[RMDB]
RNA sequence: GGGAACGACUCGAGUAGAGUCGAAAAAAUUGCUAACAUGUUCUUGGAACAGACUCAGCAUUCCCUUAACUUUGUGGGAGAGUUCGUUGUCAACGAUGUUGUCCUCGCAAUUCUCUCUGGAACCACACUCCUUAAUGUACUUCGGUACAUUAAGGAGAAAAGAAACAACAACAACAAC
Reactivity to 2A3 in 0.01 (KOAc 150mM, MgCl2 10mM, bicine 150mM(pH8.5), 24C), signal-to-noise 3, nucleotides 027 to 126: a010a020u120u050g020c020u020a040a040c030a120u030g010u000u010c030u140u220g130g010a020a000c010a020g040a050c040u040c150a020g000c010a010u010u020c010c000c010u010u010a050a060c030u040u080u140g100u100g000g020g000a010g000a000g000u010u010c010g020u020u030g040u040c010a010a000c060g220a220u300g020u030u010g020u040c000c010u000c000g030c040a000a010u040u010c010u000c000u000c030u030g080g030a040a010c030c000a040c010a020
Reactivity to DMS in 0.01 (KOAc 150mM, MgCl2 10mM, bicine 150mM(pH8.5), 24C), signal-to-noise 5, nucleotides 027 to 126: a020a020u000u000g010c010u000a080a090c260a120u000g010u010u000c000u020u000g030g000a000a000c010a010g010a160c300u010c190a030g020c000a030u000u000c000c000c010u000u010a110a070c210u000u010u000g030u010g010g000g000a010g000a030g010u000u000c010g010u000u000g000u010c010a010a020c020g010a130u010g010u000u000g010u000c000c040u010c020g010c230a010a030u000u010c000u000c020u000c040u000g010g010a100a160c090c070a070c210a200